[RMDB]
RNA sequence: GGGAACGACUCGAGUAGAGUCGAAAAUGGUGUACAAGCUGAUUUUUUCUCAGCUUUGUCAUAUGCCGGCAAACGUCUGGUGAAGGAUUUUAGUGUCAAAGGACAGAUGGUUAGCUUACAGGAGGAAGGUAAUACUCACGUUCGCGUGAGUAUUACCAAAAGAAACAACAACAACAAC
Reactivity to DMS in 0.01 (KOAc 150mM, MgCl2 10mM, bicine 150mM(pH8.5), 24C), signal-to-noise 2, nucleotides 027 to 126: u000g000g020u000g010u020a040c020a020a040g020c010u000g000a010u000u000u020u010u020u030c280u000c000a040g020c030u000u000u040g020u000c080a090u010a080u000g000c080c030g000g010c070a060a050a080c150g030u010c010u000g030g000u000g020a200a060g000g010a080u000u000u000u000a080g020u020g000u010c030a030a120a100g000g000a040c090a030g000a060u000g040g010u000u000a080g000c070u000u000a100c150a090g000g000a090g020g020a100a080
Background: The data come from the RNA Mapping Database (RMDB), library RFMREP. Chemical mapping of a 177-nucleotide RNA with DMS. High DMS reactivity at an A or C suggests that its Watson-Crick edge is free. Reactivities are given for positions 27 through 126.